[RMDB]
RNA sequence: GGGAACGACUCGAGUAGAGUCGAAAAGGACUGCGCAGUCCGGCAACAUCAGCAGAGAGCCCGCUACACGUGACGGAUUGGCUGAAGCGUACAGAAAUAUUGAGCCUCCUGCAAGAGGCAGCCAAGCAAAACGUACGUGAGUUCGCUCACGUACGAAUCAGCCUUUAAAGUUCGCUUUAAAGGCUGAAAAAGAAACAACAACAACAAC
Reactivity to DMS in 0.01 (KOAc 150mM, MgCl2 10mM, bicine 150mM(pH8.5), 24C), signal-to-noise 2, nucleotides 027 to 156: g010g020a060c000u000g020c090g030c080a050g020u010c070c050g020g000c020a050a070c200a160u000c050a130g000c060a120g010a160g000a150g020c030c020c020g040c110u030a070c080a030c040g010u000g000a070c070g030g000a110u000u000g010g000c030u020g000a100a160g030c040g050u000a260c040a100g010a110a040a140u000a210u000u020g000a210g030c010c010u000c030c000u000g010c130a200a060g000a030g000g020c000a030g040c020c010a040a160g000c070a070a050a070a170c010g020u000a000c000g000u010g000a040g020u000u000c300g000c000u000c000a000c020g000u000a000c000g010a000a070
Reactivity to 2A3 in 0.01 (KOAc 150mM, MgCl2 10mM, bicine 150mM(pH8.5), 24C), signal-to-noise 4, nucleotides 027 to 156: g030g010a030c050u080g030c130g030c110a000g030u030c010c020g030g030c010a040a040c010a080u140c060a020g010c040a010g080a000g030a020g120c020c020c020g000c040u060a040c070a010c090g030u050g050a020c040g020g070a070u070u080g030g000c010u010g020a090a000g010c030g010u040a050c040a030g170a130a130a050u210a100u160u160g050a030g020c000c000u000c020c030u120g040c060a070a020g000a010g030g020c020a010g040c020c010a010a020g030c040a020a060a030a060c000g000u000a000c000g010u000g000a010g000u020u080c140g010c170u000c000a000c000g000u000a000c000g010a000a040
Description:
This 207-nucleotide RNA was probed chemically with DMS and 2A3. The reactions ran in a buffer of 150 mM KOAc, 10 mM MgCl2 and 150 mM bicine (pH 8.5), at 24 C.